Chemical mapping of a 177-nucleotide RNA with DMS and 2A3.
RNA sequence: GGGAACGACUCGAGUAGAGUCGAAAAGAGGGGGACUCCAGUGCCGGGUAUAAUCAUGAUGUGUCCAUCUUACGUGCUUGGAUCCGCACGACCAAGGUCACCGGUGACCACCCGCUGGUGAUUGAACCUAGAGCGAUACUUUCGAGUAUCGCUCUAGAAAAGAAACAACAACAACAAC
Reactivity to DMS in 0.01 (KOAc 150mM, MgCl2 10mM, bicine 150mM(pH8.5), 24C), signal-to-noise 2, nucleotides 027 to 126: g040a130g030g000g020g010g000a110c050u010c060c060a070g010u000g000c070c030g010g000g040u010a060u000a070a090u000c090a040u010g010a070u020g010u020g000u000c060c020a080u000c040u000u000a090c060g010u010g030c030u010u010g000g000a120u020c090c230g030c030a050c020g010a150c140c040a060a150g010g000u000c000a030c000c050g010g010u000g000a110c060c090a050c020c020c030g010c020u010g000g000u010g010a020u000u000g010a080a100c260
Reactivity to 2A3 in 0.01 (KOAc 150mM, MgCl2 10mM, bicine 150mM(pH8.5), 24C), signal-to-noise 1, nucleotides 027 to 126: g090a040g000g010g000g030g020a010c020u000c030c060a010g040u040g120c020c040g000g010g020u080a090u020a170a070u070c050a040u060g060a040u120g090u010g050u100c050c000a050u030c020u060u130a020c020g040u050g000c000u070u080g020g060a060u000c050c040g030c000a010c030g030a000c050c040a090a120g000g000u000c000a000c000c000g000g000u040g090a130c040c020a030c020c020c000g000c020u000g010g000u040g000a090u030u050g020a020a010c020
For 2A3, 1,080 sequencing reads were counted. DMS adducts were read by reverse transcription with MarathonRT.